[RMDB]
An RNA of 177 nucleotides, treated with DMS and 2A3 and read out base by base.
RNA sequence: GGGAACGACUCGAGUAGAGUCGAAAACCGUAUCGGUUCGCCGAUACGGAAAAGUUAAUGCUGCUAACACACAUCUUAAGCAUCGCGGUGGUAUCGCUGGUGGGACUCCCCAGUUCGCUGGGGAGAAGAUCGGUAAACAGUUCGCUGUUUACCGAUCAAAAGAAACAACAACAACAAC
Reactivity to DMS in 0.01 (KOAc 150mM, MgCl2 10mM, bicine 150mM(pH8.5), 24C), signal-to-noise 3, nucleotides 027 to 126: c010c000g000u010a000u000c000g010g000u010u020c250g020c000c000g010a020u000a000c000g000g020a010a040a030a090g030u000u020a040a090u000g020c030u020g000c060u000a060a110c070a080c100a070c090a070u000c060u000u000a070a110g000c050a020u000c090g010c040g000g020u010g000g000u010a070u000c060g010c030u010g040g000u010g010g000g000a250c000u000c000c000c000c000a010g020u000u010c210g020c010u000g000g000g000g020a000g010a030a050
Reactivity to 2A3 in 0.01 (KOAc 150mM, MgCl2 10mM, bicine 150mM(pH8.5), 24C), signal-to-noise 2, nucleotides 027 to 126: c030c000g000u000a020u000c000g000g060u030u030c140g070c050c020g010a000u000a000c000g000g000a040a030a000a000g050u050u130a090a040u150g030c050u030g000c040u080a120a000c040a000c010a000c000a150u040c040u130u120a090a020g020c010a020u020c010g000c030g040g060u080g010g110u110a020u090c020g000c060u030g020g030u050g010g020g050a080c000u000c020c000c000c000a000g000u030u040c160g000c060u020g010g000g020g000a000g000a000a000

Values are in units of 0.01, from 0 to 300, in steps of 10. For 2A3 the reverse transcriptase was SuperScript II with manganese. DMS (dimethyl sulfate) methylates the pairing face of unpaired adenines and cytosines. The 2A3 profile rests on 3,101 reads. The DMS profile rests on 2,788 reads. For DMS the reverse transcriptase was MarathonRT. Conditions: 150 mM KOAc, 10 mM MgCl2 and 150 mM bicine (pH 8.5), 24 C.